[RMDB]
RNA sequence: GGGAACGACUCGAGUAGAGUCGAAAAUGGACUUUUUACAGUUCCUACUUAUCCGGUUUUAACGCUGUUUUUUUGGCGCAAAGGUUUACGGAUAAACAACUAAUAAUUAAACCUUUUGUGUGCGAAAAUUGGACGUUUAGGUUCGCCUAAACGUCAAGAAGAAACACUAGUUCGCUAGUGUUUCUUCAAAAGAAACAACAACAACAAC
Reactivity to 2A3 in 0.01 (KOAc 150mM, MgCl2 10mM, bicine 150mM(pH8.5), 24C), signal-to-noise 3, nucleotides 027 to 156: u090g040g010a040c050u110u100u080u110u220a070c150a060g000u090u120c010c010u050a040c030u050u030a000u030c010c000g000g040u020u080u020u050a090a050c050g000c060u050g160u100u020u020u020u000u080u240g050g020c000g000c020a010a000a010g000g000u000u000u020a000c000g010g000a010u030a040a070a020c040a030a000c040u150a070a170u140a190a030u150u130a030a010a010c010c000u030u030u100u090g060u000g000u040g030c030g030a030a040a080a120u100u120g070g010a010c000g000u000u000u010a010g000g040u020u050c120g030c020c010u010a000a000a000c010g000u000c000a000a000
Reactivity to DMS in 0.01 (KOAc 150mM, MgCl2 10mM, bicine 150mM(pH8.5), 24C), signal-to-noise 1, nucleotides 027 to 156: u000g040g000a080c080u000u000u000u000u000a120c110a180g000u000u020c010c040u010a190c050u000u000a040u000c010c010g020g000u010u000u010u000a210a080c050g030c020u020g000u000u000u000u000u000u000u000g000g020c050g030c010a020a040a020g030g050u000u000u040a100c000g000g020a080u000a020a030a150c010a100a220c090u000a090a140u030a090a110u020u000a010a020a000c000c000u000u010u020u010g010u000g000u000g030c030g030a040a060a050a160u010u010g000g000a020c000g050u000u000u000a000g010g020u000u000c300g080c020c000u000a000a000a000c010g030u000c000a000a040

Chemical mapping of a 207-nucleotide RNA with 2A3 and DMS.
The 2A3 profile rests on 1,306 reads.
As a SHAPE reagent, 2A3 marks flexible, mostly unpaired nucleotides at the ribose 2'-OH.